[RMDB]
This 177-nucleotide RNA was probed chemically with DMS and 2A3. Reactivities are given for positions 27 through 126. The DMS profile rests on 670 reads. DMS adducts were read by reverse transcription with MarathonRT. The data come from the RNA Mapping Database (RMDB), library OK2TRN. Conditions: 150 mM KOAc, 10 mM MgCl2 and 150 mM bicine (pH 8.5), 24 C. As a SHAPE reagent, 2A3 marks flexible, mostly unpaired nucleotides at the ribose 2'-OH.
RNA sequence: GGGAACGACUCGAGUAGAGUCGAAAAUAGUUACGAGGUCGUGCAGUGCACCACCGACAGGAGAACUGUCAUGAUCCCGUUUGCGCGCGACACCAUCGCGUACAACGUGCCUUUUGGCAUGAGCGUGGCUCCUUGUUGCUUUCGAGCAACAAGGAGCAAAAGAAACAACAACAACAAC
Reactivity to DMS in 0.01 (KOAc 150mM, MgCl2 10mM, bicine 150mM(pH8.5), 24C), signal-to-noise 1, nucleotides 027 to 126: u010a100g030u000u000a010c020g000a110g000g050u000c020g040u000g000c010a000g000u000g000c010a190c080c030a150c190c110g010a200c300a070g000g000a140g030a170a040c010u000g030u020c020a000u000g000a000u000c010c010c000g010u010u010u010g030c080g040c000g000c000g020a020c100a300c080c050a280u000c000g000c030g010u000a030c040a030a050c030g010u000g000c000c000u070u020u000u020g000g060c000a000u000g000a060g050c020g000u000g060
Reactivity to 2A3 in 0.01 (KOAc 150mM, MgCl2 10mM, bicine 150mM(pH8.5), 24C), signal-to-noise 1, nucleotides 027 to 126: u130a010g030u030u020a010c020g000a020g020g000u000c000g000u000g010c020a050g000u010g000c150a120c040c030a090c110c220g100a100c080a070g000g050a060g000a040a010c020u020g070u150c120a030u010g010a040u060c060c000c000g000u010u010u040g000c000g040c010g030c010g000a000c010a040c060c000a030u030c010g000c000g010u010a020c020a000a000c010g000u010g030c000c000u130u300u200u300g010g000c000a000u000g030a000g040c070g070u050g090